Structure probing data (2A3) for a 207-nucleotide construct. Conditions: 150 mM KOAc, 10 mM MgCl2 and 150 mM bicine (pH 8.5), 24 C.
RNA sequence: GGGAACGACUCGAGUAGAGUCGAAAAGGAUCCCAGGAAGCACAGGAGGCAACACAAGUCAAUGCCUCAGAGCCAGGGAACAGGAUGAACAAGAACAAUCAGAAGAUGACCUUGAGCUAAAUGAAGCAAUUGCAGCAGAUCUACAGGUCAGCUGAGAUCGCCCCAUUAAUUUCGAUUAAUGGGGCGAAAAAGAAACAACAACAACAAC
Reactivity to 2A3 in 0.01 (KOAc 150mM, MgCl2 10mM, bicine 150mM(pH8.5), 24C), signal-to-noise 1, nucleotides 027 to 156: g040g010a080u000c000c000c000a010g010g040a030a010g040c040a030c050a010g000g080a000g000g000c000a010a030c040a060c030a110a050g030u030c040a010a130u040g040c030c000u000c000a000g000a020g000c030c010a060g000g000g000a020a000c010a120g040g000a030u050g010a000a000c030a080a000g020a010a010c000a060a050u300c090a000g010a110a060g040a220u060g030a060c000c020u080u130g030a040g030c050u100a060a030a030u300g060a030a020g010c040a020a180u140u240g080c030a050g000c020a020g000a120u040c000u030a090c120a040g010g000u000c000a010g010c020u000g000a000g040a160
Record summary: The data come from the RNA Mapping Database (RMDB), library OK3TST. The 2A3 profile rests on 642 reads. Reactivities are rounded to 0.1 and cut off at 0 and 3. For 2A3 the reverse transcriptase was SuperScript II with manganese.